About this RNA:
Source: RMDB library OK3TST, as collected in RNAgym. Structure probing data (2A3 and DMS) for a 207-nucleotide construct. The DMS profile rests on 2,026 reads. For 2A3, 1,403 sequencing reads were counted. For 2A3 the reverse transcriptase was SuperScript II with manganese. The RNA was probed in 150 mM KOAc, 10 mM MgCl2 and 150 mM bicine (pH 8.5) at 24 C. In probing experiments dimethyl sulfate is read out at A N1 and C N3, which are open when not base-paired.
[RMDB]
RNA sequence: GGGAACGACUCGAGUAGAGUCGAAAAGCAUGGCGGGGAGAGCUGGCAUGGCCCAGGCAGGGCAGAUAGGCUGGAGGCCUCACUCCAAGGGCCCCAGGAUGCUGAGGCAGCCACUGAACCAAAACCCCGGGGCUGGUAGUCAGAGUCCAGGAGGGGAAGUCCAUAUUAUGUUCGCAUAAUAUGGACUAAAAGAAACAACAACAACAAC
Reactivity to 2A3 in 0.01 (KOAc 150mM, MgCl2 10mM, bicine 150mM(pH8.5), 24C), signal-to-noise 2, nucleotides 027 to 156: g050c040a070u100g000g020c040g000g030g000g000a070g010a000g020c060u040g030g020c030a110u110g030g000c040c000c020a020g000g050c070a020g010g000g000c010a000g040a110u140a060g080g020c000u020g020g050a060g080g040c000c000u030c020a060c020u030c010c020a100a110g060g030g010c000c010c010c000a010g000g010a030u100g000c160u010g000a020g000g000c000a000g010c040c010a020c040u040g040a060a040c020c010a060a080a050a080c000c000c010c010g000g040g000g010c030u040g030g030u030a080g060u050c100a010g010a010g070u060c040c030a020g010g020a070g010g000g000g020a000
Reactivity to DMS in 0.01 (KOAc 150mM, MgCl2 10mM, bicine 150mM(pH8.5), 24C), signal-to-noise 1, nucleotides 027 to 156: g030c070a050u000g000g010c080g030g020g020g010a060g010a090g020c040u000g000g030c050a170u010g010g060c010c020c010a070g000g020c110a100g030g010g020c000a070g060a090u000a090g060g000c060u000g010g030a170g030g020c010c010u030c030a060c040u000c010c040a080a050g000g020g000c030c000c010c010a150g020g020a100u000g010c070u020g030a050g020g060c030a090g020c020c010a080c100u000g020a100a040c060c040a060a080a070a060c000c010c010c070g020g020g020g040c040u010g070g010u000a030g060u010c100a090g000a180g030u000c040c020a070g040g020a140g030g030g010g000a090